This 177-nucleotide RNA was probed chemically with 2A3 and DMS. The RNA was probed in 150 mM KOAc, 10 mM MgCl2 and 150 mM bicine (pH 8.5) at 24 C. As a SHAPE reagent, 2A3 marks flexible, mostly unpaired nucleotides at the ribose 2'-OH.
[RMDB]
RNA sequence: GGGAACGACUCGAGUAGAGUCGAAAAUUAGAGGGAAUGUGCAAUUGAGACUUGACGAGCGUCUCUUUGAGAUGUGGCGCAUGCUCUUGGCAUUACCAUAGUGAGCUUCCAGGUUGGGAAACCUGGAUGCCCGUCACACAUUCGUGUGUGACGGGCAAAAAGAAACAACAACAACAAC
Reactivity to 2A3 in 0.01 (KOAc 150mM, MgCl2 10mM, bicine 150mM(pH8.5), 24C), signal-to-noise 2, nucleotides 027 to 126: u080u010a070g020a120g000g030g100a080a000u000g030u160g300c050a070a080u150u200g000a030g110a230c000u000u000g080a080c060g020a030g000c000g000u050c000u000c070u060u020u090g030a010g040a000u000g050u030g090g190c000g000c000a000u040g140c000u020c000u000u020g010g020c020a020u070u070a170c060c000a020u110a050g190u140g110a030g000c000u020u000c000c000a000g030g000u010u050g080g040g010a050a050a000c010c000u000g000g010a000
Reactivity to DMS in 0.01 (KOAc 150mM, MgCl2 10mM, bicine 150mM(pH8.5), 24C), signal-to-noise 1, nucleotides 027 to 126: u060u000a140g010a080g000g000g000a000a040u000g030u000g000c000a040a090u000u030g050a000g000a150c040u000u000g000a300c070g010a300g000c020g030u000c000u000c020u020u000u020g020a050g010a030u040g040u020g000g000c100g000c080a000u010g030c000u000c030u040u000g000g000c010a010u020u000a050c010c000a080u030a060g000u010g000a100g000c100u000u000c000c000a030g000g050u000u000g000g000g000a180a010a010c020c020u010g000g000a000